[RMDB]
RNA sequence: GGGAACGACUCGAGUAGAGUCGAAAAGGUGGCGUCAAUUUUCUCCCGAUGGAACCAUCCAUCCGCCUGCACGGAGCGGCGAUGCUGACCAGACGGGCAUCCGUCAGUUGCCGCCACCCCGUGAAGAGAUGGUGAUAGCUUUCGAGCUAUCACCAUCAAAAGAAACAACAACAACAAC
Reactivity to 2A3 in 0.01 (KOAc 150mM, MgCl2 10mM, bicine 150mM(pH8.5), 24C), signal-to-noise 3, nucleotides 027 to 126: g030g010u020g020g020c020g010u050c020a060a050u050u020u100u000c080u010c000c020c010g020a010u040g020g010a050a060c030c010a040u020c010c000a050u050c020c000g030c000c040u060g090c080a070c060g060g010a070g020c010g020g000c020g040a020u050g000c080u070g070a170c030c010a020g020a070c010g010g010g020c080a150u120c020c000g010u020c000a010g020u000u010g020c000c000g020c020c000a010c010c010c000c000g040u040g060a060a030g060a000
Reactivity to DMS in 0.01 (KOAc 150mM, MgCl2 10mM, bicine 150mM(pH8.5), 24C), signal-to-noise 3, nucleotides 027 to 126: g030g010u000g000g000c030g000u010c040a050a030u010u000u010u010c050u000c020c060c050g000a100u010g010g010a160a120c290c110a050u000c030c110a070u000c020c030g010c020c030u000g010c030a030c020g000g010a170g000c060g000g020c280g000a050u010g010c090u020g010a080c040c040a130g010a030c010g010g000g010c300a060u010c010c030g000u010c020a060g010u000u010g010c050c010g000c000c010a020c010c000c010c010g020u000g010a060a110g020a220